[RMDB]
RNA sequence: GGGAACGACUCGAGUAGAGUCGAAAAGUUGCACCUACAUCAACAUAUUUGACUAAGUCCUGAUCGCCCCAUACUCCAAGAUCCUUACCUUUAGAUUGCAGGUAAGCAACGGACGGACGCAGACCGAGAGGUAGUUGAAUUUCGAUUCAACUACCUCAAAAGAAACAACAACAACAAC
Reactivity to 2A3 in 0.01 (KOAc 150mM, MgCl2 10mM, bicine 150mM(pH8.5), 24C), signal-to-noise 3, nucleotides 027 to 126: g030u040u040g040c060a070c020c020u080a050c020a110u070c020a050a030c010a070u180a150u180u050u150g060a060c020u030a060a060g070u040c010c000u040g040a120u050c030g080c020c010c000c030a050u070a080c020u000c040c020a050a020g020a040u020c010c010u010u030a040c010c000u080u070u060a120g050a230u130u260g110c040a010g000g000u000a000a010g010c010a030a020c020g000g020a000c000g000g000a040c040g000c040a010g050a070c010c020g090a080
Reactivity to DMS in 0.01 (KOAc 150mM, MgCl2 10mM, bicine 150mM(pH8.5), 24C), signal-to-noise 4, nucleotides 027 to 126: g010u000u000g020c080a090c060c020u000a090c090a100u010c020a040a070c100a090u000a110u010u000u000g010a060c070u000a100a120g000u000c010c010u010g000a050u000c040g010c060c010c000c030a080u010a080c090u010c040c050a080a120g010a070u000c100c000u010u000a000c020c010u000u010u000a100g010a170u000u000g040c120a020g010g000u000a020a020g010c140a080a070c070g010g020a080c050g000g010a050c100g010c040a070g000a090c040c060g000a140
Structure probing data (2A3 and DMS) for a 177-nucleotide construct. For 2A3, 3,253 sequencing reads were counted. For 2A3 the reverse transcriptase was SuperScript II with manganese. The RNA was probed in 150 mM KOAc, 10 mM MgCl2 and 150 mM bicine (pH 8.5) at 24 C.